Chemical mapping of a 207-nucleotide RNA with 2A3.
High 2A3 reactivity points to a flexible backbone, as in loops and unpaired stretches.
The RNA was probed in 150 mM KOAc, 10 mM MgCl2 and 150 mM bicine (pH 8.5) at 24 C.
For 2A3, 857 sequencing reads were counted.

[RMDB]
RNA sequence: GGGAACGACUCGAGUAGAGUCGAAAACAUCCAGGCUGUAGUACAUGGUUCAGUUAGCUCACUGCAGCCUCAACCUCCUUGGCUCAGGUGAUCCUUCUGCCUUAGCCUCUUGAGUAGCUAGGACUACAGGUGUGUGCCAUCCAUGCCUGGAUAAAUAAGUUCCCGUAAACUUCGGUUUACGGGAACUAAAAGAAACAACAACAACAAC
Reactivity to 2A3 in 0.01 (KOAc 150mM, MgCl2 10mM, bicine 150mM(pH8.5), 24C), signal-to-noise 2, nucleotides 027 to 156: c070a060u040c000c000a000g010g000c000u000g090u120a060g040u060a100c030a080u070g020g010u040u080c060a050g010u110u170a020g110c110u100c090a120c030u030g040c030a000g000c000c040u000c000a010a010c010c030u120c000c010u050u140g000g000c000u020c020a000g060g000u070g080a180u200c020c030u110u110c120u110g000c000c000u000u000a010g020c050c000u070c070u160u160g020a050g000u110a010g000c030u040a020g000g060a300c000u020a050c020a060g020g000u040g010u000g050u070g050c020c010a020u000c040c000a020u140g010c000c010u000g000g000a030u040a020a070a020u220a070